[RMDB]
RNA sequence: GGGAACGACUCGAGUAGAGUCGAAAAUGACGUUCGGCUGUCAAGCAUGAUCCUUCCUGCGGAGCUCGAAGGUCGUUUGAAACGAGUCAUUCUCGAGCAGCGACAACAGCAUAAGCUUCGCAGCCAUGCUCGACUCGAGGUUCGCCUCGAGUCGAGCAAAAGAAACAACAACAACAAC
Reactivity to 2A3 in 0.01 (KOAc 150mM, MgCl2 10mM, bicine 150mM(pH8.5), 24C), signal-to-noise 2, nucleotides 027 to 126: u130g050a020c010g050u040u130c000g170g010c170u080g020u060c010a030a000g000c000a000u040g020a090u130c030c000u000u150c000c000u010g000c000g000g000a010g010c030u090c080g190a220a170g030g010u000c000g030u000u060u280g200a090a070a080c030g010a020g130u260c090a170u100u280c000u000c040g000a020g000c020a000g050c020g010a000c000a290a010c060a030g070c080a090u100a090a020g000c000u000u030c000g010c000a000g020c030c000a020u020
Notes: This 177-nucleotide RNA was probed chemically with 2A3. For 2A3 the reverse transcriptase was SuperScript II with manganese.